[RMDB]
RNA sequence: GGGAACGACUCGAGUAGAGUCGAAAACGCAGAGGGUUCUGAUAACAAAGACCCUAGAUAGCCGCAUCGGUAUUAUAGGAUGUAGUCGGUGAGCCGGAAUGCCUGCAUCGUAAGCCUAUAAGUAAAUUUAAGUGUAAUCACUUCGGUGAUUACACAACGUGAUAGUAUUGUUCGCAAUACUAUCACGAAAAGAAACAACAACAACAAC
Reactivity to DMS in 0.01 (KOAc 150mM, MgCl2 10mM, bicine 150mM(pH8.5), 24C), signal-to-noise 2, nucleotides 027 to 156: c090g020c060a160g040a080g000g020g020u000u000c050u000g010a190u000a130a200c240a120a140a090g000a040c010c010c000u000a070g010a110u000a140g010c030c020g000c060a090u000c080g020g010u010a040u010u000a060u000a020g020g010a050u000g020u010a100g000u000c000g010g030u000g010a070g000c030c050g000g020a090a150u000g020c000c020u000g000c020a030u000c040g020u000a090a070g030c030c020u000a050u010a030a050g010u010a090a060a120u000u010u010a080a190g000u000g020u000a010a010u000c000a020c010u010u000c300g020g020u000g000a030u000u000a010c010a010c000a000a050
Reactivity to 2A3 in 0.01 (KOAc 150mM, MgCl2 10mM, bicine 150mM(pH8.5), 24C), signal-to-noise 7, nucleotides 027 to 156: c060g020c050a050g030a050g110g030g020u220u120c020u050g080a120u120a200a030c020a020a100a000g000a010c000c000c000u000a020g020a100u080a020g040c040c030g050c100a120u120c110g030g000u090a050u140u040a040u080a050g020g020a040u060g050u080a040g100u070c030g000g040u030g020a020g030c020c020g040g060a100a010u110g030c000c010u010g040c010a010u020c030g040u040a030a030g000c000c000u050a060u020a110a060g080u090a050a100a190u160u240u160a170a020g000u000g000u000a000a000u000c000a010c000u030u050c150g040g000u010g000a000u000u000a000c000a000c000a000a000